An RNA of 207 nucleotides, treated with 2A3 and DMS and read out base by base. The DMS profile rests on 11,782 reads.
RNA sequence: GGGAACGACUCGAGUAGAGUCGAAAACGUCAAAGGGAUUCCAGCCUGUGAUCUCAACUGAGAAACCCCGUCCUGCUUGGAUGAUGCAGGUAUGUGGACUUGCUGGAAAACAGGUCCUCAUACCCUAACUGCGGAAACCGGUCGAGGCCCGGAAGGGACAUUAUGUCCGUUUCGACGGACAUAAUGUAAAAGAAACAACAACAACAAC
Reactivity to 2A3 in 0.01 (KOAc 150mM, MgCl2 10mM, bicine 150mM(pH8.5), 24C), signal-to-noise 9, nucleotides 027 to 156: c030g050u050c040a060a040a070g030g010g020a060u080u030c040c020a020g030c040c040u110g040u120g110a130u030c020u010c050a090a170c090u110g020a050g060a200a080a070c020c000c000c000g020u030c010c010u070g070c050u090u210g040g020a050u070g030a040u110g040c020a010g000g010u010a000u000g020u010g000g000a000c000u010u020g030c050u150g180g050a030a020a000a020c000a000g000g010u000c000c000u010c000a000u000a010c000c000c010u070a120a100c050u060g010c010g040g000a070a070a040c020c010g010g020u060c050g060a060g020g050c010c020c010g030g020a060a050g050g000g020
Reactivity to DMS in 0.01 (KOAc 150mM, MgCl2 10mM, bicine 150mM(pH8.5), 24C), signal-to-noise 4, nucleotides 027 to 156: c060g010u000c050a050a100a130g010g010g010a250u000u000c030c020a090g000c030c050u010g030u000g010a100u000c040u010c030a090a070c060u000g000a130g000a070a070a140c000c010c010c010g000u000c030c010u010g030c070u000u000g020g010a100u000g010a100u010g010c080a050g030g020u000a000u000g000u000g020g010a040c010u000u000g010c000u000g030g020a140a130a080a030c020a030g010g000u000c000c000u010c010a030u000a030c000c020c040u000a030a080c050u000g020c040g010g010a080a100a100c020c010g010g030u010c060g010a090g010g020c080c010c010g010g040a080a080g010g010g020
Background: In probing experiments dimethyl sulfate is read out at A N1 and C N3, which are open when not base-paired. The RNA was probed in 150 mM KOAc, 10 mM MgCl2 and 150 mM bicine (pH 8.5) at 24 C. 2A3 adducts were read by reverse transcription with SuperScript II with manganese.